RNA sequence: GGGAACGACUCGAGUAGAGUCGAAAACAGCAAAGCCAUGCGCGGAGGCGCAAAGUUCCUGCAUCACGGCAUUAAGCGCCAGCAACGUUAUGUGGCAGAAGCCAUUACUGAAGAGUGGCGUAUGGCACUGAUACGAUCCCUUCGGGGAUCGUAUCAGAAAAGAAACAACAACAACAAC
Reactivity to 2A3 in 0.01 (KOAc 150mM, MgCl2 10mM, bicine 150mM(pH8.5), 24C), signal-to-noise 5, nucleotides 027 to 126: c050a010g110c070a060a050a000g020c000c000a000u000g000c000g000c000g020g100a100g010g000c000g000c010a010a130a000g020u050u060c010c010u050g030c020a090u180c070a060c110g040g030c000a000u040u110a130a030g000c010g000c000c000a020g040c030a030a100c020g030u100u120a060u250g060u040g010g000c040a040g210a220a020g020c010c000a010u050u080a040c070u080g120a150a070g080a040g120u120g100g000c000g000u020a010u010g000g000c000a010
Reactivity to DMS in 0.01 (KOAc 150mM, MgCl2 10mM, bicine 150mM(pH8.5), 24C), signal-to-noise 3, nucleotides 027 to 126: c090a130g010c260a050a090a170g060c010c010a020u000g000c000g030c020g020g010a140g030g050c020g010c010a040a090a110g030u050u000c020c010u020g020c180a090u030c160a060c220g000g000c020a090u010u000a050a190g000c030g000c000c000a110g000c080a060a150c120g000u000u000a060u010g030u000g000g020c000a150g020a070a070g010c000c000a000u000u020a000c090u010g020a130a070g000a210g000u040g000g000c010g020u000a010u000g010g000c030a150
This 177-nucleotide RNA was probed chemically with 2A3 and DMS. DMS (dimethyl sulfate) methylates the pairing face of unpaired adenines and cytosines. 2A3 adducts were read by reverse transcription with SuperScript II with manganese. The RNA was probed in 150 mM KOAc, 10 mM MgCl2 and 150 mM bicine (pH 8.5) at 24 C. DMS adducts were read by reverse transcription with MarathonRT.